[RMDB]
RNA sequence: GGGAACGACUCGAGUAGAGUCGAAAAUCACAAGUGUGUGUGAGGUUAAUAAAGUAUUAGUCAAAGGCGGUCGAGCUAAACCUGACGAGCUAAUUAAAGCAUCAGAAAACCUUUUGGAAGUGGCUCGGAAGCUAAUGACAUUCGUGUCAUUAGCUUCAAAAGAAACAACAACAACAAC
Reactivity to DMS in 0.01 (KOAc 150mM, MgCl2 10mM, bicine 150mM(pH8.5), 24C), signal-to-noise 3, nucleotides 027 to 126: u010c030a050c050a100a120g010u000g030u020g000u000g020u000g000a050g000g020u000u000a060a110u000a080a090a120g020u000a040u000u000a070g000u000c030a100a150a080g000g000c040g010g010u000c020g030a040g010c030u010a020a070a090c080c020u000g010a080c080g010a180g020c010u000a060a080u000u010a070a080a090g010c040a080u000c070a060g000a050a090a060a100c070c050u020u010u020u010g000g010a110a110g020u000g000g000c010u010c070g020
Reactivity to 2A3 in 0.01 (KOAc 150mM, MgCl2 10mM, bicine 150mM(pH8.5), 24C), signal-to-noise 1, nucleotides 027 to 126: u070c020a020c000a120a070g170u130g030u010g010u010g010u020g220a050g010g060u070u100a120a070u080a090a300a010g030u070a150u110u140a030g020u030c040a100a090a000g010g000c020g000g020u150c020g020a040g000c010u030a020a040a150c000c030u020g050a020c040g030a050g000c020u020a060a050u170u150a250a250a020g020c010a030u000c000a020g070a050a200a160a150c050c000u040u080u110u080g070g000a030a090g090u040g050g060c010u030c000g000